[RMDB]
Overview: Structure probing data (DMS and 2A3) for a 177-nucleotide construct. The reactions ran in a buffer of 150 mM KOAc, 10 mM MgCl2 and 150 mM bicine (pH 8.5), at 24 C. For DMS, 1,717 sequencing reads were counted. DMS adducts were read by reverse transcription with MarathonRT. The 2A3 profile rests on 612 reads.
RNA sequence: GGGAACGACUCGAGUAGAGUCGAAAAGCAUUUAUCCUAAUACAGUUGCUCAGAUUCAGUUCAUUCAAUGCUUCGAGGCUUGAAAUAUGGGACACAUUUGUCAUUUUCCAACAAUGGGAAAGGUUGAUAUUCAAAGCUGGUUCGCCAGCUUUGAAUAAAAAGAAACAACAACAACAAC
Reactivity to DMS in 0.01 (KOAc 150mM, MgCl2 10mM, bicine 150mM(pH8.5), 24C), signal-to-noise 2, nucleotides 027 to 126: g000c160a040u070u000u010a040u020c060c020u030a110a130u050a210c070a100g000u020u000g000c080u050c090a060g000a080u020u000c100a070g000u000u000c030a100u000u020c020a020a060u040g020c070u000u000c080g020a180g030g000c060u000u000g000a040a060a130u020a070u000g010g050g030a080c050a130c090a030u020u000u060g010u060c090a070u020u000u020u000c020c060a050a110c300a080a060u000g020g000g000a030a030a050g000g000u000u050g050a140
Reactivity to 2A3 in 0.01 (KOAc 150mM, MgCl2 10mM, bicine 150mM(pH8.5), 24C), signal-to-noise 2, nucleotides 027 to 126: g090c020a080u110u110u030a110u050c020c000u030a050a050u090a040c050a020g050u140u090g020c020u010c000a000g020a150u070u020c010a000g070u080u020c010a000u070u080c030a050a120u090g040c000u040u040c040g100a070g020g170c000u040u000g040a020a070a000u190a120u220g000g060g010a010c000a000c020a170u020u070u030g040u020c010a020u000u000u010u100c040c000a070a000c080a240a280u170g000g130g000a140a000a000g030g010u130u060g040a050